[RMDB]
RNA sequence: GGGAACGACUCGAGUAGAGUCGAAAACGUCUGCGUUCGGCGAUAAGCACACAGGCAAGCGCCACGAAACCGAGCACGCAAUAGCCGGUGGCAACGGGCGUGGUGGUGCCGUCGAAAGCCUGUCCUAACGCCAUACUCCUUUCGAGGAGUAUGGCGUAAAAGAAACAACAACAACAAC
Reactivity to DMS in 0.01 (KOAc 150mM, MgCl2 10mM, bicine 150mM(pH8.5), 24C), signal-to-noise 1, nucleotides 027 to 126: c200g000u000c030u000g020c020g030u000u010c050g040g010c000g010a090u000a070a160g040c010a130c070a060c160a080g010g000c070a100a180g000c040g040c010c000a030c020g010a000a160a010c060c010g000a210g010c010a030c020g040c030a140a090u000a140g020c140c050g000g000u010g000g030c000a100a030c070g000g000g020c000g000u000g030g050u000g000g010u000g000c010c020g010u000c020g010a040a060a070g010c010c080u000g000u010c030c000u000a040
Reactivity to 2A3 in 0.01 (KOAc 150mM, MgCl2 10mM, bicine 150mM(pH8.5), 24C), signal-to-noise 2, nucleotides 027 to 126: c030g040u020c110u090g020c000g030u010u050c010g030g000c030g000a020u020a120a040g030c030a010c020a000c060a120g100g000c060a060a040g060c000g030c010c000a020c000g020a050a000a000c010c000g010a020g040c030a010c100g080c010a040a300u110a190g070c150c070g300g300u080g130g060c020a010a020c030g000g000g000c040g000u030g000g040u000g060g050u030g000c020c000g010u000c010g000a070a020a020g020c010c020u050g040u030c010c020u010a040